RNA sequence: GGGAACGACUCGAGUAGAGUCGAAAAAAGCAAAGAAAGCAACGGGGCUAGCCGACGGGUGUUCCACCUCCCGAGAGGGGACGAGUGAGGCUUAUCCCGGGGAACUCGGCGAAUCGUCCCCACAUAGCGAACGAAAUGAGUUCGCUCAUUUCGUUCGAAAAGAAACAACAACAACAAC
Reactivity to 2A3 in 0.01 (KOAc 150mM, MgCl2 10mM, bicine 150mM(pH8.5), 24C), signal-to-noise 1, nucleotides 027 to 126: a010a010g210c220a220a180a100g130a150a110a060g040c060a060a030c050g000g020g000g000c030u020a000g050c000c000g100a050c000g050g030g010u080g090u220u060c030c080a150c050c000u030c000c010c010g030a080g010a030g140g020g010g010a000c020g000a010g040u090g000a070g010g000c030u060u050a040u080c000c020c000g010g030g000g040a040a020c020u010c010g020g000c020g030a010a020u030c040g000u060c020c000c040c000a010c010a020u170a000g100
Reactivity to DMS in 0.01 (KOAc 150mM, MgCl2 10mM, bicine 150mM(pH8.5), 24C), signal-to-noise 1, nucleotides 027 to 126: a060a070g030c030a070a040a120g010a130a050a100g000c050a170a070c060g000g000g020g000c120u000a070g030c020c010g010a080c100g010g010g070u010g020u010u010c010c020a130c060c040u000c000c100c070g000a190g020a100g020g000g000g020a040c060g000a070g010u000g020a140g000g000c080u010u010a100u020c030c000c000g060g000g030g010a090a060c080u000c010g000g000c000g000a070a010u000c050g000u000c000c000c010c000a050c210a050u000a080g000